The data come from the RNA Mapping Database (RMDB), library RFMREP. An RNA of 177 nucleotides, treated with 2A3 and DMS and read out base by base. Reactivities are rounded to 0.1 and cut off at 0 and 3. The 2A3 profile rests on 3,572 reads.

RNA sequence: GGGAACGACUCGAGUAGAGUCGAAAACAUGAAUAUUAGUUACAAAUAUUUCAAUGCAGCAUACUUGCAUUGAGCUGCUAAGCACGAAGCAGUAAGUGGUUAUGUAUAUAGCGACUUUAGGAAUUGUACAAAAGAGUAUGUUCGCAUACUCUUUUGUAAAAGAAACAACAACAACAAC
Reactivity to 2A3 in 0.01 (KOAc 150mM, MgCl2 10mM, bicine 150mM(pH8.5), 24C), signal-to-noise 4, nucleotides 027 to 126: c040a080u090g060a150a050u170a180u290u150a080g060u100u110a050c030a030a170a050u050a060u030u030u010c000a000a010u010g000c000a010g010c040a070u100a240c070u070u000g000c000a010u000u000g000a010g000c010u000g000c010u030a100a030g030c040a030c200g080a060a000g000c000a000g000u030a010a010g020u040g080g010u060u000a020u040g150u020a070u040a000u010a280g000c040g090a010c010u000u020u030a020g040g030a090a110u120u090g030u050
Reactivity to DMS in 0.01 (KOAc 150mM, MgCl2 10mM, bicine 150mM(pH8.5), 24C), signal-to-noise 4, nucleotides 027 to 126: c030a090u020g000a100a070u020a070u000u000a110g010u000u000a110c100a120a080a060u010a010u000u000u000c000a010a000u000g000c010a020g020c230a150u010a100c170u000u000g000c010a010u000u000g000a030g000c020u000g000c010u000a070a130g030c120a060c160g010a090a050g010c020a000g020u000a030a020g030u000g010g020u000u000a010u010g000u000a050u020a030u000a030g010c010g000a010c010u000u000u010a060g010g020a090a100u000u000g010u000